[RMDB]
RNA sequence: GGGAACGACUCGAGUAGAGUCGAAAACGCCGAGCCAAUAAAAGGGCAGAAGACGAAAGAUCCUCAUGACGAUUGCUCGUCGGUCGGAUGGAGCAGGGCCGUGGCGGAAGAAGAGGACGAGGAGGUCUGAUGAUAACAUCUUCGGAUGUUAUCAUCAAAAAGAAACAACAACAACAAC
Reactivity to DMS in 0.01 (KOAc 150mM, MgCl2 10mM, bicine 150mM(pH8.5), 24C), signal-to-noise 7, nucleotides 027 to 126: c090g010c010c020g010a160g010c030c030a060a080u000a060a080a110a130g010g000g020c030a090g020a090a060g010a050c030g010a060a090a200g000a080u000c010c020u000c120a070u010g010a080c090g010a110u000u000g010c220u000c020g020u000c010g010g010u010c100g010g020a040u000g010g010a060g000c050a060g010g000g010c060c050g030u010g000g010c060g010g010a060a070g010a070a060g010a080g000g000a040c070g010a090g000g010a070g010g000u010c100
Reactivity to 2A3 in 0.01 (KOAc 150mM, MgCl2 10mM, bicine 150mM(pH8.5), 24C), signal-to-noise 5, nucleotides 027 to 126: c050g030c020c020g030a030g010c010c010a120a040u180a120a160a030a020g030g010g000c000a020g060a080a010g030a010c040g040a040a030a050g050a050u020c010c010u090c050a110u140g030a030c030g040a040u010u150g040c040u030c040g050u010c020g010g040u070c040g020g010a050u100g050g010a040g020c070a040g010g010g000c020c010g070u080g030g010c050g040g010a030a020g030a050a000g030a040g030g010a020c030g010a020g030g020a020g020g030u040c060
Background: Chemical mapping of a 177-nucleotide RNA with DMS and 2A3. High 2A3 reactivity points to a flexible backbone, as in loops and unpaired stretches. Values cover nucleotides 27 to 126. For DMS the reverse transcriptase was MarathonRT. It was measured as part of the RMDB library OK2TST. The DMS profile rests on 9,667 reads. The RNA was probed in 150 mM KOAc, 10 mM MgCl2 and 150 mM bicine (pH 8.5) at 24 C.